An RNA of 177 nucleotides, treated with 2A3 and DMS and read out base by base. Source: RMDB library OK2TRN, as collected in RNAgym. The RNA was probed in 150 mM KOAc, 10 mM MgCl2 and 150 mM bicine (pH 8.5) at 24 C.
[RMDB]
RNA sequence: GGGAACGACUCGAGUAGAGUCGAAAACUCGCCAGGAUUGCAGAGCACGAUUGAUGGGAUCCCUCCUUUAAUUUGAACAGGCUUUCCGUACUUGCAAUUUGAUUGCCAAUCUUUUUGGGCCCCAAUGUACUUUUCCUGUAUUCGUACAGGAAAAGUAAAAAGAAACAACAACAACAAC
Reactivity to 2A3 in 0.01 (KOAc 150mM, MgCl2 10mM, bicine 150mM(pH8.5), 24C), signal-to-noise 2, nucleotides 027 to 126: c000u020c010g020c010c030a040g000g060a070u050u100g000c030a020g040a030g070c040a010c100g080a080u030u150g030a040u080g040g020g030a070u050c020c010c020u070c030c020u130u130u110a150a160u130u140u130g040a050a020c030a070g020g000c000u010u010u020c010c010g020u030a100c030u030u060g030c000a060a110u080u040u170g100a110u070u050g010c000c010a030a080u050c010u060u100u020u070u010g030g030g000c000c000c020c000a030a040u120g010
Reactivity to DMS in 0.01 (KOAc 150mM, MgCl2 10mM, bicine 150mM(pH8.5), 24C), signal-to-noise 4, nucleotides 027 to 126: c040u000c040g010c100c040a090g000g010a090u000u000g010c030a060g000a090g030c050a040c080g000a070u010u020g020a110u000g010g000g010a100u000c040c020c030u010c030c030u000u000u020a040a090u010u010u000g000a070a090c120a090g000g000c060u000u000u010c030c040g030u010a070c060u000u010g010c040a040a070u000u020u000g010a090u000u000g010c030c070a060a090u010c050u010u000u000u010u010g010g000g010c030c000c010c050a070a090u020g000
Notes:
Reactivities are rounded to 0.1 and cut off at 0 and 3.